Structure probing data (2A3) for a 207-nucleotide construct. 2A3 is a SHAPE reagent: it acylates the 2'-hydroxyl of flexible nucleotides of all four kinds.

RNA sequence: GGGAACGACUCGAGUAGAGUCGAAAACGUCGGACUCCUCGGUGUCCGAAACGUUGAACACACCGUAGGAGGUGGUCUGCUCGGGGGGUAUGUCGAAGGCGCACAGCACACUGCCGCCGUAGCGGUCACGUAUCUCGGACAUCCUGGUCAGCACACCUGUUCCAGAAAAGUUCGCUUUUCUGGAACAAAAAGAAACAACAACAACAAC
Reactivity to 2A3 in 0.01 (KOAc 150mM, MgCl2 10mM, bicine 150mM(pH8.5), 24C), signal-to-noise 2, nucleotides 027 to 156: c040g050u040c050g070g050a140c050u030c040c010u030c060g020g010u000g010u010c000c000g050a010a050a030c020g020u000u190g140a220a000c060a000c000a020c050c000g050u080a160g040g100a100g000g000u000g000g020u020c000u020g000c000u010c110g020g020g000g000g000g000u070a060u300g040u010c090g110a060a060g050g000c020g020c060a070c130a200g000c010a020c000a010c010u030g000c000c000g070c000c000g020u010a000g000c010g020g000u030c010a000c020g010u040a100u070c080u000c030g000g000a000c010a000u020c000c010u000g000g020u040c020a010g050c110a010c000a010c130c030